Chemical mapping of a 177-nucleotide RNA with 2A3 and DMS.
Reactivities are given for positions 27 through 126.
The 2A3 profile rests on 7,377 reads.
Source: RMDB library RFM100, as collected in RNAgym.

RNA sequence: GGGAACGACUCGAGUAGAGUCGAAAAGGCCCCGCUCGUGGCCCGUCCGCACUGUCCGGGCCAGGCCCCGGCCCGAACCCCCUGGAGACAACUCCCGCAGGGUCUGCGCUGCGCCGCGGAGCCCCGGCUUUGGUAAAUACUUCGGUAUUUACCAAAGAAAAGAAACAACAACAACAAC
Reactivity to 2A3 in 0.01 (KOAc 150mM, MgCl2 10mM, bicine 150mM(pH8.5), 24C), signal-to-noise 3, nucleotides 027 to 126: g050g020c010c000c000c010g020c030u060c030g100u050g030g010c000c000c010g020u020c010c020g030c040a070c090u080g040u080c030c000g010g000g000c000c000a010g020g020c000c000c000c010g020g000c000c000c000g040a040a050c010c010c000c000c000u040g030g020a030g010a040c050a160a190c050u020c010c000c010g020c060a060g030g010g010u020c030u040g030c040g000c030u110g040c050g010c070c020g000c020g020g020a050g020c010c010c000c000g020g000
Reactivity to DMS in 0.01 (KOAc 150mM, MgCl2 10mM, bicine 150mM(pH8.5), 24C), signal-to-noise 4, nucleotides 027 to 126: g010g000c030c010c030c160g040c060u000c060g040u000g030g000c020c030c030g000u000c030c050g000c100a100c110u020g000u020c050c000g000g000g020c010c020a110g000g010c020c030c050c060g020g010c030c020c030g010a120a130c060c020c020c050c020u000g000g020a080g000a110c120a130a180c060u020c010c010c080g020c080a110g020g010g010u000c020u010g010c030g020c050u020g010c100g020c080c030g000c030g000g000a090g010c040c020c020c020g000g010